[RMDB]
RNA sequence: GGGAACGACUCGAGUAGAGUCGAAAAACGCCGAAAACCAGGCCCGGCAAUCGGGCGGCCAGGCAGGCAAGGUCAUCGCCGUCGCCUGCGACAUCACCACCGAGCCAGGCAGGCAGGCCGCGCUCGAAGUAGUGGUACGAUUCGUCGUACCACUACUAAAAGAAACAACAACAACAAC
Reactivity to DMS in 0.01 (KOAc 150mM, MgCl2 10mM, bicine 150mM(pH8.5), 24C), signal-to-noise 5, nucleotides 027 to 126: a110c120g010c010c020g010a080a050a110a140c050c020a110g010g020c040c020c020g020g000c100a120a120u020c040g010g020g000c030g000g010c040c080a090g010g000c010a070g010g000c030a140a110g000g020u010c130a130u010c180g010c020c000g020u010c200g010c010c010u000g010c030g020a070c050a060u010c100a080c090c070a100c100c030g010a050g020c040c010a150g010g020c030a070g010g010c110a170g010g010c010c070g000c180g000c030u010c030g000a110
Reactivity to 2A3 in 0.01 (KOAc 150mM, MgCl2 10mM, bicine 150mM(pH8.5), 24C), signal-to-noise 2, nucleotides 027 to 126: a000c020g000c000c000g040a040a030a020a020c020c000a010g130g000c000c000c050g040g000c050a030a160u190c000g000g000g000c020g020g000c030c000a050g060g000c010a010g010g020c010a010a090g040g030u100c110a120u140c300g010c020c020g070u070c060g000c000c000u000g030c010g040a040c020a110u070c040a020c030c010a030c000c060g000a000g040c000c000a010g020g000c010a010g030g010c020a010g000g050c000c000g030c000g000c010u000c010g010a040
Chemical mapping of a 177-nucleotide RNA with DMS and 2A3. Reactivities are rounded to 0.1 and cut off at 0 and 3. For DMS the reverse transcriptase was MarathonRT. Reactivities are given for positions 27 through 126. For 2A3, 4,148 sequencing reads were counted. Conditions: 150 mM KOAc, 10 mM MgCl2 and 150 mM bicine (pH 8.5), 24 C. The data come from the RNA Mapping Database (RMDB), library OK2TST.